[RMDB]
RNA sequence: GGGAACGACUCGAGUAGAGUCGAAAAGGCGUGAUAGGAGUUUGGGUGUCUGGUGAGGCCACCCUCAUUCUCACAGUGUGCUAGACCAUGGUCAGGUCCAGGCCCCUGGGGGUCAUCCGGGCUACCAGCUAAAAACAGUGUUCGCACUGUUUUUAGCAAAAGAAACAACAACAACAAC
Reactivity to DMS in 0.01 (KOAc 150mM, MgCl2 10mM, bicine 150mM(pH8.5), 24C), signal-to-noise 3, nucleotides 027 to 126: g020g000c030g030u000g000a180u000a140g020g000a030g010u010u010u000g010g020g020u000g010u000c040u000g000g020u010g010a270g000g010c060c020a020c020c000c000u010c070a030u000u000c010u020c060a110c100a100g030u000g010u000g000c000u010a070g000a160c040c030a180u010g010g020u020c150a110g000g010u000c020c010a120g010g000c010c020c040c060u010g010g020g010g000g010u000c040a040u010c140c090g020g000g000c010u010a070c040c050a070
Reactivity to 2A3 in 0.01 (KOAc 150mM, MgCl2 10mM, bicine 150mM(pH8.5), 24C), signal-to-noise 2, nucleotides 027 to 126: g030g000c000g010u050g040a110u130a170g030g010a000g010u040u090u050g020g000g000u000g010u000c040u060g100g090u230g150a040g000g030c020c000a000c000c020c000u000c000a050u060u050c030u030c000a120c020a080g120u120g000u050g130c020u040a020g020a040c010c020a090u090g030g020u100c070a040g060g000u000c030c010a030g000g020c020c000c000c020u170g300g050g000g000g000u000c000a020u050c070c060g020g000g010c000u010a040c010c000a020